[RMDB]
An RNA of 177 nucleotides, treated with DMS and 2A3 and read out base by base. Values cover nucleotides 27 to 126. 2A3 is a SHAPE reagent: it acylates the 2'-hydroxyl of flexible nucleotides of all four kinds. For 2A3 the reverse transcriptase was SuperScript II with manganese. The RNA was probed in 150 mM KOAc, 10 mM MgCl2 and 150 mM bicine (pH 8.5) at 24 C.
RNA sequence: GGGAACGACUCGAGUAGAGUCGAAAAGUCACUAGAAUGGAGGGAUCCGCAUGAGGCUGGUUUUACAGAGCAGUGAACACUUCCUUCUCUUGACAGUGGAGGGAUCACAGGCUGCAGUAUUCUUGGCUGCUACUCAAGCAUUCGUGCUUGAGUAGCAAAAAGAAACAACAACAACAAC
Reactivity to DMS in 0.01 (KOAc 150mM, MgCl2 10mM, bicine 150mM(pH8.5), 24C), signal-to-noise 2, nucleotides 027 to 126: g010u000c040a050c040u010a070g000a120a080u010g030g000a070g010g000g010a050u010c040c080g000c040a060u000g000a100g000g000c020u000g000g000u000u000u010u030a110c090a030g010a040g000c060a050g010u000g000a030a070c250a070c130u000u000c000c000u010u010c010u000c020u000u040g040a120c140a100g000u000g000g000a020g000g000g020a050u010c030a050c200a100g000g000c010u000g010c050a110g010u000a060u000u000c030u000u010g010g010c100
Reactivity to 2A3 in 0.01 (KOAc 150mM, MgCl2 10mM, bicine 150mM(pH8.5), 24C), signal-to-noise 1, nucleotides 027 to 126: g000u000c000a000c100u020a040g030a100a110u210g090g000a030g070g020g010a030u000c070c010g000c020a070u070g040a010g120g000c000u020g020g070u110u050u120u060a080c030a030g020a040g000c030a030g000u000g070a070a010c050a030c060u050u000c000c000u020u050c010u010c000u050u110g110a100c000a050g030u010g060g040a020g000g010g020a000u110c050a070c000a060g070g000c020u020g050c050a000g010u030a100u030u010c030u000u000g020g000c020